This 177-nucleotide RNA was probed chemically with DMS and 2A3.
Conditions: 150 mM KOAc, 10 mM MgCl2 and 150 mM bicine (pH 8.5), 24 C.
2A3 adducts were read by reverse transcription with SuperScript II with manganese.
[RMDB]
RNA sequence: GGGAACGACUCGAGUAGAGUCGAAAAGAACGAGCCAUCAUGAAAGCUUCGUUGGUUCGAUGUGAAAGUGAUGGAAAUGUGGAUUUUUUUAUCCACCUGAACGCAGAACCAAUGCGGAAAGCUCGGAGGGAAUUCUAAUGUUCGCAUUAGAAUUCCCAAAAGAAACAACAACAACAAC
Reactivity to DMS in 0.01 (KOAc 150mM, MgCl2 10mM, bicine 150mM(pH8.5), 24C), signal-to-noise 2, nucleotides 027 to 126: g010a150a130c020g000a000g000c000c090a110u010c080a120u020g000a190a040a250g000c000u000u030c020g030u040u020g000g010u000u000c020g030a140u000g000u000g010a110a080a200g020u030g020a080u000g000g000a110a050a080u010g000u000g000g000a010u000u000u000u080u000u050u000a000u000c010c000a010c030c030u020g000a190a040c020g000c080a130g000a010a020c020c030a020a010u000g000c040g000g000a040a060a130g030c040u000c020g000g010a160
Reactivity to 2A3 in 0.01 (KOAc 150mM, MgCl2 10mM, bicine 150mM(pH8.5), 24C), signal-to-noise 3, nucleotides 027 to 126: g110a040a020c010g010a000g000c000c010a100u100c020a020u180g070a130a060a000g030c020u030u000c030g010u000u010g050g070u110u050c040g040a100u040g030u010g050a250a040a030g020u020g040a090u140g030g130a070a090a060u220g000u040g010g020a020u030u060u060u000u000u130u240a010u010c000c000a000c000c000u010g060a110a010c010g000c030a010g010a070a020c090c010a020a010u020g000c010g060g000a070a000a020g030c030u020c020g000g000a120